[RMDB]
An RNA of 177 nucleotides, treated with 2A3 and DMS and read out base by base. For DMS the reverse transcriptase was MarathonRT. The RNA was probed in 150 mM KOAc, 10 mM MgCl2 and 150 mM bicine (pH 8.5) at 24 C. Reactivities are rounded to 0.1 and cut off at 0 and 3. For 2A3, 26,655 sequencing reads were counted. Values cover nucleotides 27 to 126. For 2A3 the reverse transcriptase was SuperScript II with manganese. The DMS profile rests on 21,043 reads.
RNA sequence: GGGAACGACUCGAGUAGAGUCGAAAAGAGCCCGGCAUGACCGUGACAAGGUGUCUGGUGGACGGGGAUCCCGUGGCCCUCAACAGGCAGCCCACCCUGCACAGAAACUCUAUGCUGGGCAUGAGGGGUUCAUGUAAAGAUUCGUCUUUACAUGAACAAAAGAAACAACAACAACAAC
Reactivity to 2A3 in 0.01 (KOAc 150mM, MgCl2 10mM, bicine 150mM(pH8.5), 24C), signal-to-noise 2, nucleotides 027 to 126: g090a010g010c000c000c000g010g010c010a020u030g030a060c030c070g060u030g060a110c070a110a080g080g010u020g020u040c050u050g100g140u070g070g080a040c030g010g000g020g090a100u170c000c000c030g010u060g070g040c000c000c000u030c020a030a070c010a060g050g000c020a060g010c010c000c000a030c000c000c010u020g000c020a010c000a020g130a080a140a050c040u040c030u080a020u020g000c000u010g000g000g000c010a010u090g020a040g030g030g010
Reactivity to DMS in 0.01 (KOAc 150mM, MgCl2 10mM, bicine 150mM(pH8.5), 24C), signal-to-noise 9, nucleotides 027 to 126: g000a150g020c000c000c000g020g010c010a020u000g010a060c060c050g010u000g010a160c110a100a100g010g010u000g010u000c040u010g000g020u010g010g010a110c060g010g010g010g010a150u000c020c010c010g020u000g020g010c010c000c010u000c100a170a160c160a080g000g000c080a140g000c080c020c020a200c060c000c030u000g000c020a030c030a070g010a120a090a070c150u000c100u000a020u000g000c000u000g010g000g010c010a010u000g000a060g000g010g000